An RNA of 170 nucleotides, treated with DMS and 2A3 and read out base by base. The reactions ran in a buffer of 150 mM KOAc, 10 mM MgCl2 and 150 mM bicine (pH 8.5), at 24 C.
[RMDB]
RNA sequence: GGGAACGACUCGAGUAGAGUCGAAAACAGGACCCCCUUCUAAAAUGACCGAGAGGGGGUGCUAGGAACACGGGGGCCCAGUGGAGCCAUGGGAUGCUCCUCCCGAUUCCGUCCAACCCCUUCCCCCCACCCUAUCAGUUCGCUGAUAGGAAAAGAAACAACAACAACAAC
Reactivity to DMS in 0.01 (KOAc 150mM, MgCl2 10mM, bicine 150mM(pH8.5), 24C), signal-to-noise 9, nucleotides 027 to 129: c150a080g020g000a070c020c020c030c010c020u000u000c070u070a050a070a080a120u090g040a110c130c120g030a060g030a050g050g010g010g020g020u020g020c040u010a090g020g020a020a000c140a070c040g000g020g030g050g030c040c000c000a100g000u000g000g000a040g000c050c070a170u060g010g020g020a300u010g020c040u050c000c000u030c020c000c000g000a290u020u020c030c000g030u000c120c070a070a190c030c020c000c060u020u010c000c000c030c000c040c000a120c090
Reactivity to 2A3 in 0.01 (KOAc 150mM, MgCl2 10mM, bicine 150mM(pH8.5), 24C), signal-to-noise 9, nucleotides 027 to 129: c060a010g030g070a030c000c000c010c010c000u050u060c030u130a140a180a160a160u220g100a110c080c110g070a050g010a010g090g000g010g000g000u010g000c010u040a030g010g030a040a030c180a080c200g020g000g000g040g020c010c010c010a030g040u110g060g040a020g010c030c040a170u150g060g060g030a050u150g030c020u010c020c000u030c000c000c000g000a010u030u000c010c010g010u030c030c010a040a070c010c010c000c010u010u010c000c000c000c000c000c000a030c000